[RMDB]
An RNA of 207 nucleotides, treated with 2A3 and read out base by base. For 2A3, 531 sequencing reads were counted.

RNA sequence: GGGAACGACUCGAGUAGAGUCGAAAAAGAGGUUUAAUUGGCUCAUGGUUCUGUAGGCUCUACAGGGAGCUUAGUGGCAUCUGCUCAGCUUCUGGUGAGGCUUCAGUUAGCUUUUACUCAUGGCAGAAAGCAAAGCGGGAGCAGGCACGUCACAUGACGACGCCAUACUAUUCGUAGUAUGGCGUCGAAAAGAAACAACAACAACAAC
Reactivity to 2A3 in 0.01 (KOAc 150mM, MgCl2 10mM, bicine 150mM(pH8.5), 24C), signal-to-noise 1, nucleotides 027 to 156: a000g100a030g000g000u070u040u090a080a130u280u070g040g050c010u000c060a050u080g030g020u150u010c060u060g090u070a010g110g000c000u050c070u080a080c050a030g130g000g000a030g010c030u050u030a000g060u020g000g010c030a080u030c040u040g000c000u010c010a010g000c040u090u040c030u120g050g050u120g000a020g070g000c010u010u000c090a040g040u050u160a010g000c000u120u000u060u280a170c070u080c030a060u000g120g000c050a030g020a100a100a000g020c120a000a050a000g010c000g000g090g030a000g000c000a000g010g000c030a000c020g060u000c000a030c030a090u060g030a010